[RMDB]
This 177-nucleotide RNA was probed chemically with 2A3 and DMS. The reactions ran in a buffer of 150 mM KOAc, 10 mM MgCl2 and 150 mM bicine (pH 8.5), at 24 C.

RNA sequence: GGGAACGACUCGAGUAGAGUCGAAAAGUGUCGGACUCGCAAGUGCGAAUAUAUUUUAUCCCUAAACAGGGAGUGGAAAGCACGUCCUGGAGUCGAAAACACGUCCAUCCCAAAGCGAGAAAUGAAAGCGUACGUUUGUAUUCGUACAAACGUACGCAAAAGAAACAACAACAACAAC
Reactivity to 2A3 in 0.01 (KOAc 150mM, MgCl2 10mM, bicine 150mM(pH8.5), 24C), signal-to-noise 1, nucleotides 027 to 126: g000u010g040u050c020g010g000a030c000u020c000g180c080a060a030g020u020g070c010g050a140a000u080a000u020a050u030u180u090u100a100u010c000c020c000u170a280a250a030c070a090g000g000g000a060g000u050g010g150a070a090a030g000c000a000c000g090u220c000c020u020g040g000a000g010u010c010g050a040a010a000a000c020a000c000g010u010c010c010a020u000c000c010c000a030a030a010g240c090g040a130g080a080a080a070u210g060a230a050a000
Reactivity to DMS in 0.01 (KOAc 150mM, MgCl2 10mM, bicine 150mM(pH8.5), 24C), signal-to-noise 1, nucleotides 027 to 126: g000u000g000u000c030g000g000a010c000u000c070g000c170a060a090g000u000g010c000g020a130a060u000a100u000a120u000u000u000u030a170u020c010c000c000u000a050a040a210c300a040g000g030g000a000g010u000g000g050a150a080a130g030c000a000c030g000u000c240c110u010g010g010a000g000u000c010g000a050a040a100a090c010a080c030g000u000c030c200a080u010c000c000c000a020a120a170g010c110g000a100g010a140a020a060u000g000a200a060a160